[RMDB]
The record gives the reactivity of an RNA of 177 nucleotides to 2A3.

RNA sequence: GGGAACGACUCGAGUAGAGUCGAAAAGAAUAAAAGUGUGAGCCGAAUCCUAGGGCUCCUAGGGACGCAUCGUCCGAUGCGACACGAAUAAAAGAUCGAACCUAAGAAGAUCAGGGAAUAAAGAAAAGGGAAAACUAAACUUCGGUUUAGUUUUCCCAAAAGAAACAACAACAACAAC
Reactivity to 2A3 in 0.01 (KOAc 150mM, MgCl2 10mM, bicine 150mM(pH8.5), 24C), signal-to-noise 1, nucleotides 027 to 126: g080a000a230u300a210a100a000a000g020u000g000u000g000a010g060c070c000g050a020a000u000c040c000u110a190g050g050g000c020u000c000c000u000a000g000g000g000a000c000g000c000a000u000c020g290u080c100c120g000a000u000g050c040g000a010c000a000c000g020a090a000u140a230a030a000a000g000a000u000c060g000a090a180c000c080u020a040a000g000a060a000g000a020u010c010a000g010g130g040a040a040u110a220a160a190g180a000a220a000a170